[RMDB]
Source: RMDB libraries RFM100 and RFMREP, as collected in RNAgym. An RNA of 177 nucleotides, treated with DMS and 2A3 and read out base by base. 2A3 adducts were read by reverse transcription with SuperScript II with manganese. Conditions: 150 mM KOAc, 10 mM MgCl2 and 150 mM bicine (pH 8.5), 24 C.
RNA sequence: GGGAACGACUCGAGUAGAGUCGAAAAGGUUUGACCGUAACCUGAGGUCAGAUAUCUGAGCCCACAGCACGGCGGCCCAUUAAGCUUAUCGUCUGCUCCUGUGUAGGCAGGCCGAUAAAACCCAUGGAUACGGAUUCGUAUUCGUACGAAUCCGUAUAAAAGAAACAACAACAACAAC
Reactivity to DMS in 0.01 (KOAc 150mM, MgCl2 10mM, bicine 150mM(pH8.5), 24C), signal-to-noise 6, nucleotides 027 to 126: g000g010u000u000u010g000a100c000c010g000u000a110a090c180c080u020g000a300g020g010u000c010a010g020a200u010a090u010c020u010g000a090g020c020c010c010a100c070a060g020c300a050c030g010g040c020g000g010c030c020c050a100u020u010a120a130g020c160u000u010a030u000c000g000u000c000u000g000c010u020c120c080u030g020u020g030u020a190g010g010c000a000g000g000c080c090g010a030u000a030a040a110a140c020c010c020a070u050g010g000
Reactivity to 2A3 in 0.01 (KOAc 150mM, MgCl2 10mM, bicine 150mM(pH8.5), 24C), signal-to-noise 8, nucleotides 027 to 126: g060g020u030u070u160g130a190c010c010g030u070a060a070c000c030u020g030a020g040g010u020c000a000g020a090u230a080u130c020u020g050a070g120c010c010c010a080c020a010g030c060a000c010g010g000c000g020g020c000c030c000a070u120u160a050a020g050c040u010u020a010u020c010g020u000c010u010g020c030u120c030c030u280g040u120g050u170a070g020g000c010a000g020g010c030c070g010a000u010a010a050a020a030c030c020c010a030u100g110g010